[RMDB]
RNA sequence: GGGAACGACUCGAGUAGAGUCGAAAAGGUCCCAGCUGGGCUGUGCAUCAGGCAGUUUGGGAAAUAUUCAAUUCUCAGCGGAAGCCAGAAUUUGAAUUCUCUCAUCUUUUAGGAAUCAUUUACCAGGUCUAGCCAGUCAGUUCGCUGACUGGCUAGAAAAAGAAACAACAACAACAAC
Reactivity to 2A3 in 0.01 (KOAc 150mM, MgCl2 10mM, bicine 150mM(pH8.5), 24C), signal-to-noise 1, nucleotides 027 to 126: g040g000u000c000c000c000a010g000c060u000g040g140g000c000u020g080u130g130c000a230u300c020a070g120g000c000a000g000u140u200u080g020g000g010a000a000a000u250a120u000u000c000a020a000u020u000c000u060c070a020g000c040g060g030a040a040g020c000c000a020g060a050a020u080u000u080g020a020a010u110u000c040u010c000u000c000a020u040c060u030u080u090u210a000g080g060a140a030u050c010a000u040u000u190a150c010c000a010g050g050
Record summary: Chemical mapping of a 177-nucleotide RNA with 2A3. The RNA was probed in 150 mM KOAc, 10 mM MgCl2 and 150 mM bicine (pH 8.5) at 24 C. It was measured as part of the RMDB library RFM100.